Annotation:
This 207-nucleotide RNA was probed chemically with 2A3. Values cover nucleotides 27 to 156.
RNA sequence: GGGAACGACUCGAGUAGAGUCGAAAAGAAAGAAAGAAAUUAGCUCGCCAGUUAGCGAGGUCUGUCCCCACACGACAGAUAAUCGGGUGCAACUCCCGCCCCUUUUCCGAGGGUCAUCGGAAGCAAAAAAACUCAGGCAACUUCGGUUGCCUGAGAAGAAAAGAGGUAGGUUCGCCUACCUCUUUUCAAAAGAAACAACAACAACAAC
Reactivity to 2A3 in 0.01 (KOAc 150mM, MgCl2 10mM, bicine 150mM(pH8.5), 24C), signal-to-noise 1, nucleotides 027 to 156: g070a000a130a020g060a060a080a010g040a030a200a080u130u040a070g020c000u010c020g000c030c030a120g100u150u200a010g020c000g000a010g010g000u020c000u000g010u000c010c060c080c000a020c030a000c030g030a010c000a000g020a020u050a070a140u130c000g000g000g000u020g000c000a000a010c010u010c010c000c000g030c010c000c000c030u080u200u000u000c000c010g010a010g000g000g000u050c030a000u030c000g000g000a000a000g000c040a000a170a060a000a000a020a060c010u020c010a000g000g020c000a010a000c000u100u140c210g080g010u020u000g000c000c000u000g000a000g000a000a000